[RMDB]
RNA sequence: GGGAACGACUCGAGUAGAGUCGAAAAAAACUUUUGUGACUUGAUGAAACGGGACUAAUCUCCUCACCGAGGCUAAGCAAGUAAAAUACGCCUCUCAUAUCCUUACCUGAGGGUGGUAAGGAAAUAACCUGCAACGCUUCCUUCGGGAAGCGUUGAACAUCAAUAUUAUGUUCGCAUAAUAUUGAUGAAAAGAAACAACAACAACAAC
Reactivity to 2A3 in 0.01 (KOAc 150mM, MgCl2 10mM, bicine 150mM(pH8.5), 24C), signal-to-noise 5, nucleotides 027 to 156: a000a000a000c120u140u060u050u090g070u050g050a060c030u070u030g020a030u050g030a110a060a070c060g000g020g000a010c030u070a070a070u030c030u020c050c010u060c030a060c040c060g010a000g000g000c030u070a030a030g060c050a080a050g050u130a080a070a040a030u100a060c070g000c010c000u000c000u000c030a030u050a060u180c000c000u000u000a010c000c010u060g060a080g010g080g010u020g000g000u000a000a010g010g000a000a010a000u010a000a020c020c040u060g020c010a000a000c000g000c000u000u000c000c000u030u040c100g050g000g000a000a000g000c000g000u000u000g000a000a010
Reactivity to DMS in 0.01 (KOAc 150mM, MgCl2 10mM, bicine 150mM(pH8.5), 24C), signal-to-noise 2, nucleotides 027 to 156: a050a040a020c050u000u000u000u010g060u000g000a110c010u000u000g010a040u000g000a040a070a060c070g010g000g000a140c050u000a120a110u010c020u000c000c000u000c020a060c020c000g010a020g030g040c010u000a090a070g010c050a020a050g000u000a040a080a060a100u000a090c080g010c010c010u020c030u010c040a120u020a100u000c010c010u000u000a010c030c030u020g010a090g060g020g030u000g010g020u010a010a020g010g000a000a020a040u000a080a080c050c020u000g000c000a020a030c000g020c020u000u000c000c000u000u000c300g040g040g000a010a020g030c000g010u010u010g010a020a160